[RMDB]
RNA sequence: GGGAACGACUCGAGUAGAGUCGAAAAGAAACAAAGACGCCACAAGAGCAUCGACGCCUGUGAAAACGGAGCAGACAUUACUCCGUAAAAUUAAGUAACAAAAUCCAAACCUUGCGGUACAAGAAAAACUAUAAAUCCUGUUCGCAGGAUUUAUAGUAAAAGAAACAACAACAACAAC
Reactivity to 2A3 in 0.01 (KOAc 150mM, MgCl2 10mM, bicine 150mM(pH8.5), 24C), signal-to-noise 7, nucleotides 027 to 126: g030a000a040a000c050a020a090a010g080a040c060g020c030c010a060c030a050a040g030a030g060c010a050u060c030g040a050c040g020c010c020u060g010u030g080a040a070a010a000c000g000g000a000g020c040a020g090a120c030a060u110u170a050c010u000c000c010g010u030a030a040a010a000u200u080a080a010g070u040a060a010c020a030a100a040a040u030c030c020a040a030a050c010c000u020u030g010c020g020g030u070a040c040a050a000g080a060a080a010a010
Reactivity to DMS in 0.01 (KOAc 150mM, MgCl2 10mM, bicine 150mM(pH8.5), 24C), signal-to-noise 5, nucleotides 027 to 126: g000a130a080a060c060a070a090a110g000a060c060g010c000c010a070c110a080a070g000a100g000c020a040u010c090g010a090c080g020c040c040u000g000u020g000a060a070a110a030c010g000g000a020g010c180a090g020a160c230a090u040u030a130c000u010c010c000g010u000a010a030a060a070u060u020a060a060g010u020a080a050c090a030a030a090a080u040c020c060a040a090a070c050c030u000u010g000c050g000g020u010a050c070a050a060g000a050a080a050a080
The record gives the reactivity of an RNA of 177 nucleotides to 2A3 and DMS.
The 2A3 profile rests on 12,228 reads.
The reactions ran in a buffer of 150 mM KOAc, 10 mM MgCl2 and 150 mM bicine (pH 8.5), at 24 C.